Conditions: 150 mM KOAc, 10 mM MgCl2 and 150 mM bicine (pH 8.5), 24 C. An RNA of 170 nucleotides, treated with 2A3 and DMS and read out base by base. For DMS the reverse transcriptase was MarathonRT. For 2A3 the reverse transcriptase was SuperScript II with manganese. Reactivities are given for positions 27 through 129.
[RMDB]
RNA sequence: GGGAACGACUCGAGUAGAGUCGAAAAAUUCGCCUUUUCUUCCUUUCUUCCACCCACUGCUCGAGGAUCUCCUCCCUCCCCUUCGAGGAUUCCCCUGCGACGGGUAGGCUCAUCCUGAGACCGGGGACAACAGUUGCGUUCGCGCAACUGAAAAGAAACAACAACAACAAC
Reactivity to 2A3 in 0.01 (KOAc 150mM, MgCl2 10mM, bicine 150mM(pH8.5), 24C), signal-to-noise 4, nucleotides 027 to 129: a000u110u080c090g060c000c010u040u030u030u000c030u020u100c010c000u010u050u010c000u030u020c020c040a050c060c030c010a060c050u030g010c000u020c010g030a000g010g060a060u010c010u000c000c020u020c010c000c020u020c000c010c000c000u010u110c040g050a070g010g010a060u070u060c000c000c000c000u030g020c010g060a070c010g020g010g010u040a040g090g000c020u010c040a080u010c010c030u000g030a020g000a040c060c030g030g000g020g050a020c030a050a040
Reactivity to DMS in 0.01 (KOAc 150mM, MgCl2 10mM, bicine 150mM(pH8.5), 24C), signal-to-noise 4, nucleotides 027 to 129: a170u050u020c130g030c060c010u000u010u050u040c000u020u010c020c020u050u000u000c060u000u000c030c010a080c000c060c050a060c060u010g040c000u020c020g000a080g070g000a110u020c070u030c000c000u020c020c010c020u000c000c000c000c000u020u060c060g010a110g050g020a180u010u030c000c040c010c050u000g040c100g040a250c120g010g030g040u030a060g010g070c070u000c070a130u120c030c010u050g010a120g000a230c110c070g040g000g010g010a060c150a110a090